[RMDB]
RNA sequence: GGGAACGACUCGAGUAGAGUCGAAAAAGAAUCUCCUUCGGGAGAUUCUGAACCUCUAAGCUGAUUGCGGAUGACGACGAGGCAGCUCGUGUCGAGCAACCACCGAGAACAGGUUCGCCUGUUCUAAAAACACUCAACAAUUCGUUGUUGAGUGUUUAAAAGAAACAACAACAACAAC
Reactivity to 2A3 in 0.01 (KOAc 150mM, MgCl2 10mM, bicine 150mM(pH8.5), 24C), signal-to-noise 4, nucleotides 027 to 126: a000g000a000a000u000c000u000c010c000u020u060c140g110g010g000a000g000a000u000u000c000u000g000a010a020c000c000u000c080u130a100a070g030c050u000g070a100u040u070g020c030g040g120a110u210g020a050c130g070a010c010g010a030g000g060c060a090g100c030u000c010g000u020g030u030c010g020a010g000c020a010a030c010c010a030c010c060g140a030g000a020a010c000a000g020g040u030u060c130g080c020c010u000g000u000u000c000u000a010a010
Reactivity to DMS in 0.01 (KOAc 150mM, MgCl2 10mM, bicine 150mM(pH8.5), 24C), signal-to-noise 9, nucleotides 027 to 126: a010g000a030a000u000c000u000c000c000u000u010c180g040g010g010a010g000a010u000u000c000u000g000a060a160c030c000u000c180u010a100a130g020c140u000g000a040u000u000g010c010g010g010a200u010g000a050c020g010a030c020g010a050g000g000c300a120g010c000u000c010g020u000g010u000c010g000a230g000c010a030a030c020c010a030c150c100g010a050g000a020a020c040a000g000g010u000u010c210g010c010c000u000g000u000u000c000u000a010a070
This 177-nucleotide RNA was probed chemically with 2A3 and DMS. Conditions: 150 mM KOAc, 10 mM MgCl2 and 150 mM bicine (pH 8.5), 24 C. For DMS, 13,225 sequencing reads were counted. For 2A3 the reverse transcriptase was SuperScript II with manganese. Source: RMDB library M2PK50, as collected in RNAgym.